[RMDB]
RNA sequence: GGGAACGACUCGAGUAGAGUCGAAAAGAUAUGGACGAAGGAGUCGUCUUGGAUUUAUCGGAAACGAUUGUCAGACGCUCCCUCGUCCUAAGUCAAAUCAAACCAUAGCUUCGGCUAUGGUUUGAAACCCAUAUAAUUCCUUCGGGAAUUAUAUGGGAAAAGAAACAACAACAACAAC
Reactivity to DMS in 0.01 (KOAc 150mM, MgCl2 10mM, bicine 150mM(pH8.5), 24C), signal-to-noise 3, nucleotides 027 to 126: g000a040u000a300u000g000g000a010c000g010a010a030g010g000a010g020u020c040g010u000c000u000u010g020g000a030u000u010u000a000u000c000g020g000a150a090a180c010g010a010u000u000g000u000c010a020g010a000c000g020c010u010c000c000c020u000c000g000u010c000c000u000a010a090g000u000c010a110a130a170u000c000a000a000a010c000c000a000u000a000g010c000u000u010c210g040g010c000u000a000u000g000g000u000u000u000g000a010a120a170
Reactivity to 2A3 in 0.01 (KOAc 150mM, MgCl2 10mM, bicine 150mM(pH8.5), 24C), signal-to-noise 4, nucleotides 027 to 126: g010a020u070a040u140g010g000a010c000g010a000a020g030g020a010g080u300c050g010u020c100u110u180g100g010a070u280u300u230a020u050c020g020g040a040a040a050c020g010a030u020u030g030u040c000a000g010a020c000g000c000u010c010c010c010u010c000g010u010c000c000u000a010a000g000u000c010a020a000a150u010c000a010a000a010c000c000a000u000a000g020c000u060u050c300g070g000c000u000a000u010g000g000u010u000u000g000a000a000a000